This 170-nucleotide RNA was probed chemically with 2A3 and DMS. The RNA was probed in 150 mM KOAc, 10 mM MgCl2 and 150 mM bicine (pH 8.5) at 24 C. DMS adducts were read by reverse transcription with MarathonRT. 2A3 adducts were read by reverse transcription with SuperScript II with manganese. Source: RMDB library 15KLIB, as collected in RNAgym.
RNA sequence: GGGAACGACUCGAGUAGAGUCGAAAAUUCGAUCCGGACCGGCUCAUCUCGGCAAGGGGCGGCAGUCCUCAGUACUCUUACUCUUUCCUAUAAAGAGGAGACUGCUGGACUCGCCGCCCAAGCCCGAAAAGAGGGGGGUUCGCCCCCCUCAAAAGAAACAACAACAACAAC
Reactivity to 2A3 in 0.01 (KOAc 150mM, MgCl2 10mM, bicine 150mM(pH8.5), 24C), signal-to-noise 1, nucleotides 027 to 129: u010u030c000g060a040u050c010c020g040g090a000c000c000g020g000c020u060c010a130u040c000u000c000g020g000c000a110a060g030g010g030g010c020g000g000c020a000g020u000c000c030u000c000a010g050u100a230c000u000c000u030u070a150c000u000c020u030u080u100c000c110u150a200u080a110a000a030g000a000g020g020a000g000a000c000u020g050c090u000g000g050a000c000u040c040g060c000c040g020c000c010c010a000a000g000c000c000c000g030a000a000a000a020
Reactivity to DMS in 0.01 (KOAc 150mM, MgCl2 10mM, bicine 150mM(pH8.5), 24C), signal-to-noise 2, nucleotides 027 to 129: u050u000c100g110a140u000c080c000g010g000a110c130c050g000g090c000u000c000a000u040c090u040c000g010g110c110a000a050g030g000g000g010c010g010g000c000a030g010u000c010c010u060c030a000g000u060a100c070u000c040u000u060a300c020u010c000u000u000u030c300c240u080a150u110a020a000a000g000a060g000g000a000g000a050c000u000g030c230u080g020g020a000c000u040c000g110c000c000g020c050c000c000a080a000g050c150c000c000g030a100a000a000a000